[RMDB]
RNA sequence: GGGAACGACUCGAGUAGAGUCGAAAACACGGAUGGACAAGCGCAGGGAGGACGUGAAGUGAAGUGAUAGCAGGAGAUAGGUGUGUAUAGGAUUUAAUGGAACGCAAUUUUAAGUUCUUUUGCAGCGCAAGGCGCUGUAAUUCGUUACAGCGCCUUGAAAAGAAACAACAACAACAAC
Reactivity to 2A3 in 0.01 (KOAc 150mM, MgCl2 10mM, bicine 150mM(pH8.5), 24C), signal-to-noise 4, nucleotides 027 to 126: c070a010c000g070g020a040u090g030g010a020c040a080a040g010c040g000c060a030g030g010g030a020g010g050a030c040g040u040g070a060a010g030u040g080a070a020g020u020g070a080u080a070g000c040a010g020g080a040g020a030u080a070g040g010u020g000u000g010u060a050u060a130g030g010a020u000u090u090a100a040u070g040g040a070a020c030g000c090a020a030u040u080u030u100a080a050g000u020u040c000u020u090u040u100g110c100a070g080c040g000
Reactivity to DMS in 0.01 (KOAc 150mM, MgCl2 10mM, bicine 150mM(pH8.5), 24C), signal-to-noise 9, nucleotides 027 to 126: c080a110c110g000g010a080u000g000g010a070c100a070a110g010c100g020c050a070g000g010g010a090g000g010a070c100g020u010g010a080a080g010u000g010a070a080g010u010g010a080u010a080g010c050a060g010g000a060g010a070u000a050g010g010u000g010u010g010u010a050u010a060g010g010a060u000u000u000a050a060u010g010g010a060a070c120g010c160a050a050u000u000u000u010a040a100g010u000u000c020u000u000u000u000g010c090a090g000c130g010

The record gives the reactivity of an RNA of 177 nucleotides to 2A3 and DMS.
The reactions ran in a buffer of 150 mM KOAc, 10 mM MgCl2 and 150 mM bicine (pH 8.5), at 24 C.
The DMS profile rests on 32,483 reads.
For 2A3, 5,450 sequencing reads were counted.
For DMS the reverse transcriptase was MarathonRT.